[RMDB]
Chemical mapping of a 207-nucleotide RNA with 2A3. For 2A3 the reverse transcriptase was SuperScript II with manganese. High 2A3 reactivity points to a flexible backbone, as in loops and unpaired stretches.

RNA sequence: GGGAACGACUCGAGUAGAGUCGAAAAAGCAGGAAAGUUAAUGCAAUGACUAACCGUACUGAAAAUGAUUGUCGCUGCUCAUGGCUAAAUUGCUAUGACUAAACUUUAGUCACUUAAGUUACGGUGCUCUCUUUGCCCGACUGCCGGCAGCGUGCUAGUGGCAGUAAUGCUUCGGCAUUACUGCCACAAAAGAAACAACAACAACAAC
Reactivity to 2A3 in 0.01 (KOAc 150mM, MgCl2 10mM, bicine 150mM(pH8.5), 24C), signal-to-noise 2, nucleotides 027 to 156: a000g100c060a020g000g010a230a110a050g000u040u030a030a060u300g010c090a050a120u160g050a070c020u010a040a000c010c020g010u060a040c010u030g160a010a000a060a100u110g060a100u010u080g050u030c010g000c030u030g010c000u020c040a080u090g010g000c010u070a140a000a100u210u140g030c020u070a030u080g010a010c000u020a050a100a180c060u160u110u030a020g000u010c000a020c070u090u090a040a050g010u140u040a050c000g010g030u190g030c000u000c000u000c000u160u070u150g000c000c000c000g060a050c100u090g010c000c000g020g000c000a020g030c010g020u020g000c010u070a030